RNA sequence: GGGAACGACUCGAGUAGAGUCGAAAAGAAACACAGACGUCACAAGAGCAUCGACGCCUGUGAAAACGGAGCAGACAUUACUCCGUAAAAUUAAGUAACAAAAUCCAAACCUUGUGGUACAAGAAAAAUAUACGUACGGUUUCGACCGUACGUAUAUAAAAGAAACAACAACAACAAC
Reactivity to 2A3 in 0.01 (KOAc 150mM, MgCl2 10mM, bicine 150mM(pH8.5), 24C), signal-to-noise 6, nucleotides 027 to 126: g050a010a060a000c010a000c000a000g020a020c000g000u000c000a040c050a170a070g080a060g240c070a170u130c080g000a000c000g000c020c010u000g000u000g000a020a020a000a000c010g010g010a010g000c050a010g100a220c020a050u160u260a050c020u000c000c010g000u020a040a000a010a010u230u120a100a000g100u080a080a010c040a070a070a040a030u060c030c020a030a000a090c040c010u040u060g040u050g070g080u130a020c030a030a040g110a080a100a000a050
Reactivity to DMS in 0.01 (KOAc 150mM, MgCl2 10mM, bicine 150mM(pH8.5), 24C), signal-to-noise 4, nucleotides 027 to 126: g050a180a080a200c000a010c010a000g020a050c000g010u010c020a130c180a180a140g050a110g000c250a110u020c150g000a010c000g010c010c000u000g020u010g000a030a040a140a040c000g000g000a010g010c130a090g060a080c300a120u020u020a180c020u000c000c000g030u010a040a030a130a110u010u030a070a120g020u010a020a050c030a050a090a100a050u070c070c030a080a110a100c070c050u000u030g010u000g010g000u000a170c060a070a070g040a040a080a060a040
Structure probing data (2A3 and DMS) for a 177-nucleotide construct. For DMS the reverse transcriptase was MarathonRT. Reactivities are given for positions 27 through 126. It was measured as part of the RMDB library OK1LIB. Values are in units of 0.01, from 0 to 300, in steps of 10. The RNA was probed in 150 mM KOAc, 10 mM MgCl2 and 150 mM bicine (pH 8.5) at 24 C.